[RMDB]
RNA sequence: GGGAACGACUCGAGUAGAGUCGAAAACGUAGUCUGUGGCGCGAAGUAUUCACGCCAAUUGUACUGAUGUAUACGCUGGCCUAUUUUUGCCUUACCAAUACGCUUAGCGCCAUUAGUAUCUGGACGCGGAGCCAGGAGGGUUCGCCCUCCUGGCUCCAAAAGAAACAACAACAACAAC
Reactivity to 2A3 in 0.01 (KOAc 150mM, MgCl2 10mM, bicine 150mM(pH8.5), 24C), signal-to-noise 2, nucleotides 027 to 126: c010g040u070a010g000u000c020u020g030u000g020g000c000g000c030g060a060a000g140u120a160u240u110c040a000c060g030c000c000a000a040u110u080g000u000a000c010u000g050a030u150g070u040a040u020a110c050g050c010u010g000g000c000c010u030a090u010u060u050u090u070g130c090c050u050u050a100c040c000a110a000u030a070c030g000c020u070u250a010g000c030g000c030c000a000u060u000a010g020u000a060u170c120u050g010g010a020c000g020c060
An RNA of 177 nucleotides, treated with 2A3 and read out base by base. For 2A3 the reverse transcriptase was SuperScript II with manganese. The RNA was probed in 150 mM KOAc, 10 mM MgCl2 and 150 mM bicine (pH 8.5) at 24 C.